[RMDB]
RNA sequence: GGGAACGACUCGAGUAGAGUCGAAAACAUCACGGUCAAGGGAAACAGGGACCUCCUCAUCAAAGUUGUGCAGAAAUGGGUUCAGCCGAACGGACAUGUCCUUCUAAUUGAUGAGAUCGAAAAUCGGACAGACGGGUGAAUUCGUUCACCCGUCUGUAAAAGAAACAACAACAACAAC
Reactivity to DMS in 0.01 (KOAc 150mM, MgCl2 10mM, bicine 150mM(pH8.5), 24C), signal-to-noise 2, nucleotides 027 to 126: c150a150u010c130a010c120g020g030u020c020a070a180g010g030g010a060a050a280c060a000g000g030g000a150c000c010u000c070c000u010c110a010u040c000a090a040a100g020u000u000g020u000g040c070a090g000a020a040a060u030g060g010g020u000u000c020a080g010c010c030g000a050a010c080g030g000a110c110a070u000g040u030c000c000u000u000c030u010a150a070u000u000g000a050u030g000a010g010a110u030c170g000a050a040a000a090u010c120g000g000
Reactivity to 2A3 in 0.01 (KOAc 150mM, MgCl2 10mM, bicine 150mM(pH8.5), 24C), signal-to-noise 1, nucleotides 027 to 126: c070a060u050c060a000c020g000g000u000c070a030a060g100g000g080a010a050a070c040a010g040g060g000a010c000c000u000c020c020u000c020a010u020c010a030a000a190g040u030u030g000u050g100c020a010g040a040a070a070u120g000g040g000u080u060c050a120g100c060c050g000a080a040c050g020g050a070c070a070u050g070u000c020c010u080u010c120u000a140a280u020u000g000a000u010g000a030g010a000u070c040g040a000a000a030a140u100c050g000g010
Chemical mapping of a 177-nucleotide RNA with DMS and 2A3. For 2A3 the reverse transcriptase was SuperScript II with manganese.